The data come from the RNA Mapping Database (RMDB), library M2PK90. This 177-nucleotide RNA was probed chemically with DMS. The DMS profile rests on 1,157 reads. The RNA was probed in 150 mM KOAc, 10 mM MgCl2 and 150 mM bicine (pH 8.5) at 24 C.

[RMDB]
RNA sequence: GGGAACGACUCGAGUAGAGUCGAAAAUAGUAGAUAGGGGUGGAAGAUGACAGCUUUCCCGCAGCCCACCCUGUUAAGUGGUUUACCACGAUUAUUGUCAUCAAAAUAAAAUGGGACCCAAAACAAAGGCAUAUAUUUACUUCGGUAAAUAUAUGCCAAAAGAAACAACAACAACAAC
Reactivity to DMS in 0.01 (KOAc 150mM, MgCl2 10mM, bicine 150mM(pH8.5), 24C), signal-to-noise 2, nucleotides 027 to 126: u000a150g020u020a110g010a180u010a070g050g000g000g000u000g000g000a190a080g000a010u000g020a020c030a030g000c010u000u010u000c000c030c000g000c240a040g000c000c020c010a030c000c020c000u000g010u010u010a080a140g010u000g000g000u010u020u000a120c020c000a010c010g000a080u000u010a060u010u000g010u000c000a010u010c020a120a080a070a130u030a020a070a050a010u030g000g000g000a100c040c020c040a070a100a080a070c230a100a090a090